[RMDB]
Source: RMDB library M2RFPK, as collected in RNAgym. An RNA of 207 nucleotides, treated with DMS and 2A3 and read out base by base. 2A3 adducts were read by reverse transcription with SuperScript II with manganese.
RNA sequence: GGGAACGACUCGAGUAGAGUCGAAAAGAAUCACCGUACCUAUUUAGGUUUACGCUCCAAGAUCGGUGGAUAGCAGCCCUAUCAAUAUCUAGGAGAACUGUGCUAUAUUUAGAAGAUUAGGUAGUCUAUUACACAGCCAUGUUCGCAUGGCUGUGAACGUUCAAACCCUAUUCGUAGGGUUUGAACGAAAAGAAACAACAACAACAAC
Reactivity to DMS in 0.01 (KOAc 150mM, MgCl2 10mM, bicine 150mM(pH8.5), 24C), signal-to-noise 2, nucleotides 027 to 156: g010a100a090u010c000a250c040c050g000u010a050c000c010u000a180u000u000u000a060g020g000u010u000u000a070c090g000c020u000c040c010a080a110g020a030u000c050g000g020u000g000g020a050u000a060g030c040a190g020c090c090c010u000a100u000c050a070a130u000a060u010c060u000a120g020g010a110g000a070a060c060u010g020u000g020c010u000a050u010a060u010u000u000a110g000a140a140g000a100u000u000a090g040g010u000a050g010u010c030u010a090u030u010a230c000a020c000a030g000c000c000a030u000g000u000u010c300g020c000a020u000g010g020c010u000g010u000g010a010a040
Reactivity to 2A3 in 0.01 (KOAc 150mM, MgCl2 10mM, bicine 150mM(pH8.5), 24C), signal-to-noise 3, nucleotides 027 to 156: g040a020a080u110c010a000c030c010g010u020a010c030c000u110a160u250u220u260a020g000g000u030u020u050a030c030g010c010u000c000c010a000a010g000a040u060c020g010g040u060g010g020a010u070a040g020c070a010g020c020c010c000u070a100u130c040a080a070u030a010u210c030u040a030g000g040a010g010a060a070c050u070g040u080g100c010u020a040u010a070u240u120u040a150g060a210a030g030a120u100u080a020g040g000u010a010g060u030c020u030a110u050u110a060c020a000c000a000g040c000c000a010u020g030u060u060c110g020c120a000u000g000g000c010u000g000u010g000a000a000